[RMDB]
RNA sequence: GGGAACGACUCGAGUAGAGUCGAAAAACUUUUCUUCAUUCGUCAGCAAACUGAAGGGCAGAACUGUCUUGGUGGUCGGGGAGAAGUUGUCCGUCCCAGGCAAAAAGGUCGACUGGUUGUCAGACCAGAGAAACUGGUAUUUCGAUACCAGUUUCUCAAAAGAAACAACAACAACAAC
Reactivity to DMS in 0.01 (KOAc 150mM, MgCl2 10mM, bicine 150mM(pH8.5), 24C), signal-to-noise 5, nucleotides 027 to 126: a020c040u000u000u000u000c010u000u000c040a180u000u010c070g020u000c050a040g020c060a050a090a110c080u000g010a120a090g020g000g000c030a040g000a090a120c120u010g000u000c040u010u000g010g020u010g000g000u000c150g010g000g010g010a040g010a030a030g010u000u000g010u000c020c040g000u000c000c000c000a300g000g010c110a050a040a080a090a060g010g010u000c010g000a050c030u010g000g010u010u000g000u000c050a100g010a030c020c010a110
Reactivity to 2A3 in 0.01 (KOAc 150mM, MgCl2 10mM, bicine 150mM(pH8.5), 24C), signal-to-noise 3, nucleotides 027 to 126: a000c010u040u060u040u060c020u030u040c020a090u140u120c060g070u050c030a070g020c070a140a120a110c050u100g040a100a120g060g010g000c040a020g050a220a130c080u040g020u020c000u070u120g040g000u020g010g050u070c060g010g010g010g000a070g010a070a030g010u040u050g050u000c020c010g000u010c000c000c000a000g000g020c020a000a000a000a090a100g010g010u020c000g020a020c070u120g220g100u160u090g010u000c030a030g010a030c010c000a010
Overview: The record gives the reactivity of an RNA of 177 nucleotides to DMS and 2A3. For DMS the reverse transcriptase was MarathonRT. For DMS, 5,584 sequencing reads were counted. The 2A3 profile rests on 2,885 reads. 2A3 is a SHAPE reagent: it acylates the 2'-hydroxyl of flexible nucleotides of all four kinds.